Source: RMDB library RFM100, as collected in RNAgym. Chemical mapping of a 177-nucleotide RNA with 2A3 and DMS. The DMS profile rests on 1,007 reads. For 2A3, 565 sequencing reads were counted. 2A3 is a SHAPE reagent: it acylates the 2'-hydroxyl of flexible nucleotides of all four kinds. 2A3 adducts were read by reverse transcription with SuperScript II with manganese. Reactivities are given for positions 27 through 126.

RNA sequence: GGGAACGACUCGAGUAGAGUCGAAAACCCAGUGCAGCCCCCAGAUAAGACUGCAGUAUUUUCCUUAUAUGAUCUGGUCCCACCGUGGGCAGCACUGCAUGCCCAGAGCCUGAGAGGAUUAUGAAAAGCUACCAAGGUGGUUCGCCACCUUGGUAGCAAAAGAAACAACAACAACAAC
Reactivity to 2A3 in 0.01 (KOAc 150mM, MgCl2 10mM, bicine 150mM(pH8.5), 24C), signal-to-noise 1, nucleotides 027 to 126: c000c000c010a000g070u000g020c000a080g000c000c000c120c070c050a000g010a060u200a130a050g090a080c000u060g030c080a060g000u050a200u010u120u010u000c040c020u140u180a160u010a030u300g110a100u000c030u050g000g040u040c000c000c060a060c000c000g080u030g000g020g020c000a000g000c000a010c050u000g000c030a070u040g000c000c000c000a010g090a040g000c120c080u070g000a010g000a000g050g000a050u070u130a020u040g060a000a020a070a000
Reactivity to DMS in 0.01 (KOAc 150mM, MgCl2 10mM, bicine 150mM(pH8.5), 24C), signal-to-noise 1, nucleotides 027 to 126: c000c000c000a190g040u000g010c000a050g000c070c040c000c040c090a040g000a040u000a030a140g000a160c110u000g020c000a010g030u010a090u040u010u060u000c090c060u020u040a060u060a110u060g000a020u040c020u000g000g000u040c000c000c040a130c080c060g000u000g090g000g000c000a090g000c080a110c040u010g000c010a060u000g050c040c000c000a070g030a110g000c040c020u000g170a050g000a110g030g100a080u000u020a220u000g010a120a040a090a100